[RMDB]
RNA sequence: GGGAACGACUCGAGUAGAGUCGAAAACCUCACUACAUUUUACUGUUCCUAAAGAAUUUCUGACAGGUACAGUAAAACGUAUUGCAAGGUUUAUCAGUUCCUAUAAACAGGUAAAUAACAAUAUAUGAAAAGCAAAGACUGUUCGCAGUCUUUGCAACCAACAUUGCGGGUUCGCCCGCAAUGUUGGAAAAGAAACAACAACAACAAC
Reactivity to 2A3 in 0.01 (KOAc 150mM, MgCl2 10mM, bicine 150mM(pH8.5), 24C), signal-to-noise 1, nucleotides 027 to 156: c000c000u020c000a030c000u010a010c000a020u020u000u000u000a000c000u020g100u030u060c000c000u020a020a010a030g070a130a300u110u280u090c000u070g090a120c100a090g000g000u010a000c000a000g010u030a000a000a000a000c000g000u000a000u000u020g020c100a150a010g030g020u000u010u010a180u110c030a010g000u000u000c000c000u050a070u190a030a120a000c080a050g180g050u070a070a150a110u150a120a000c050a060a170u140a000u080a010u300g070a070a050a000a000g000c010a000a000a000g000a000c000u010g120u090u120c150g060c050a000g030u000c000u060u000u000g010c000a000a000